[RMDB]
RNA sequence: GGGAACGACUCGAGUAGAGUCGAAAAAUGGGUUCAUUUCUAGGCUUCGCAUCCGCUGUGCCGAUUUUGUCCAUAUUUGUUUGCUAGAUGUUAUGAUGCGUGGGUUUAUGUUGCAUGAUUUAGUUGCUAUAUUAGGACGUUUCGACGUCCUAAUAUAAAAAGAAACAACAACAACAAC
Reactivity to DMS in 0.01 (KOAc 150mM, MgCl2 10mM, bicine 150mM(pH8.5), 24C), signal-to-noise 8, nucleotides 027 to 126: a070u000g010g010g000u000u010c040a060u000u010u000c060u010a150g010g010c040u000u000c120g020c050a100u000c060c110g010c060u010g010u000g020c040c030g000a100u000u000u000u000g010u000c020c030a070u010a070u000u000u010g010u000u000u000g010c050u000a070g000a070u000g010u000u010a070u010g010a060u000g010c040g020u000g010g010g000u010u010u000a080u020g000u000u000g010c040a050u000g010a100u000u000u010a080g020u000u000g010c130